[RMDB]
RNA sequence: GGGAACGACUCGAGUAGAGUCGAAAACCCUGAAUAAAUUCACAGCAAUACAUCAAAGUAGUAUGAAAGUUGGCCAGUAUAAAUAAAUUCCCUGUUAACGGAAAGAGGGUUUGCAAAUCCGACGUCGGACUCAAUCAGAAUUCGUUCUGAUUGAGUCAAAAGAAACAACAACAACAAC
Reactivity to 2A3 in 0.01 (KOAc 150mM, MgCl2 10mM, bicine 150mM(pH8.5), 24C), signal-to-noise 4, nucleotides 027 to 126: c010c000c010u020g060a050a050u110a110a100a050u120u080c030a040c030a070g090c050a050a040u030a120c010a040u080c050a070a090a080g060u110a030g040u020a070u060g100a080a040a010g040u040u030g040g010c020c030a020g070u070a060u050a160a130a020u110a030a030a020u070u010c010c000c000u040g040u130u080a070a000c030g070g040a050a020a000g070a040g000g000g000u030u040u030g010c030a090a050a020u000c010c000g030a040c020g080u140c060g020
Reactivity to DMS in 0.01 (KOAc 150mM, MgCl2 10mM, bicine 150mM(pH8.5), 24C), signal-to-noise 4, nucleotides 027 to 126: c010c000c010u020g020a110a070u000a050a080a080u000u020c070a060c100a050g000c070a090a050u010a050c090a070u010c080a060a100a130g000u030a070g010u010a030u000g000a040a090a110g010u020u000g020g000c010c020a090g000u010a060u020a020a030a100u020a030a040a140u010u010c000c020c010u020g030u020u020a070a090c110g000g000a030a040a110g000a170g010g000g000u000u010u030g020c130a030a070a070u010c020c010g010a060c180g020u020c120g020